The record gives the reactivity of an RNA of 207 nucleotides to 2A3. For 2A3 the reverse transcriptase was SuperScript II with manganese.

RNA sequence: GGGAACGACUCGAGUAGAGUCGAAAAGAUAAGCUAGCAGCAAAAAGGAACCGAUUCCCACCAAGUUCGGAAAGAGAUACCGGGCGAGGCGCUGAAGAGAGAAUCUCGCUUCAGACACCCCAAGGACAUGACCUUAAAAUGUUCGCAUUUUAAGGAAGUUCACCAAUCUGUUCGCAGAUUGGUGAACAAAAGAAACAACAACAACAAC
Reactivity to 2A3 in 0.01 (KOAc 150mM, MgCl2 10mM, bicine 150mM(pH8.5), 24C), signal-to-noise 1, nucleotides 027 to 156: g010a080u110a110a040g020c020u030a000g020c110a000g000c010a000a170a010a050a080g060g010a070a020c040c010g090a180u050u040c010c010c010a020c020c010a060a000g060u060u100c000g030g030a100a110a090g120a010g010a050u040a060c000c000g060g000g020c010g030a000g030g030c040g000c100u010g040a040a010g030a000g030a010g000a120a150u180c100u020c100g030c010u010u000c000a040g030a120c000a110c080c030c000c000a040a000g040g010a000c000a080u190g120a070c020c000u000u000a000a000a010a010u000g000u060u040c100g000c050a000u020u000u000u000a000a000g040g000a000a000